An RNA of 177 nucleotides, treated with DMS and read out base by base.
For DMS the reverse transcriptase was MarathonRT.
The data come from the RNA Mapping Database (RMDB), library OK2TRN.

[RMDB]
RNA sequence: GGGAACGACUCGAGUAGAGUCGAAAAGGUUGAUGAUGUUGACAUAGGGUCAAUUGCAAGAGUGACAAAGAAACAAGCUUUGACCGCUUCUUUGUAUGAUCUAAACAGAAUCUUCACAGUGCAUCACAAACCAAGGCAGGUUCGCCUGCCUUGGUUUAAAAGAAACAACAACAACAAC
Reactivity to DMS in 0.01 (KOAc 150mM, MgCl2 10mM, bicine 150mM(pH8.5), 24C), signal-to-noise 1, nucleotides 027 to 126: g000g000u000u000g020a010u000g060a110u010g020u020u010g000a180c140a080u020a170g020g040g000u000c000a030a190u000u020g040c020a020a090g000a100g010u000g040a190c010a020a020a010g000a140a080a110c270a040a160g020c050u000u000u020g000a080c070c080g000c020u010u030c020u000u000u000g020u000a050u040g030a000u000c020u010a030a100a110c100a050g000a070a080u000c050u000u000c110a080c070a160g020u000g020c090a080u000c170a030c140
The reactions ran in a buffer of 150 mM KOAc, 10 mM MgCl2 and 150 mM bicine (pH 8.5), at 24 C. Reactivities are rounded to 0.1 and cut off at 0 and 3. For DMS, 643 sequencing reads were counted.